[RMDB]
RNA sequence: GGGAACGACUCGAGUAGAGUCGAAAAUCUUCCGAGGAGCGUUGCAACCGCCACUUUAGCUUGGCGGCCAGGCUCGGAACCGUGACAACGGCGCUCACCCGCAAAAAGCCCCGGGUUCGCCCGGGGCCAAAUACAGACACUUCGGUGUCUGUAUUUGAAAAGAAACAACAACAACAAC
Reactivity to DMS in 0.01 (KOAc 150mM, MgCl2 10mM, bicine 150mM(pH8.5), 24C), signal-to-noise 1, nucleotides 027 to 126: u010c150u010u000c030c010g000a060g040g000a030g000c000g040u010u000g040c070a160a200c010c020g000c010c000a010c130u000u010u020a110g040c240u000u020g000g010c000g010g020c020c000a210g030g000c030u000c040g000g010a040a160c040c050g000u010g010a150c200a050a050c000g000g000c020g000c020u010c040a210c050c060c020g000c130a000a030a100a180a200g010c050c000c030c000g060g010g000u000u000c150g020c010c030c020g030g030g010g000c000

An RNA of 177 nucleotides, treated with DMS and read out base by base.
The DMS profile rests on 711 reads.
Conditions: 150 mM KOAc, 10 mM MgCl2 and 150 mM bicine (pH 8.5), 24 C.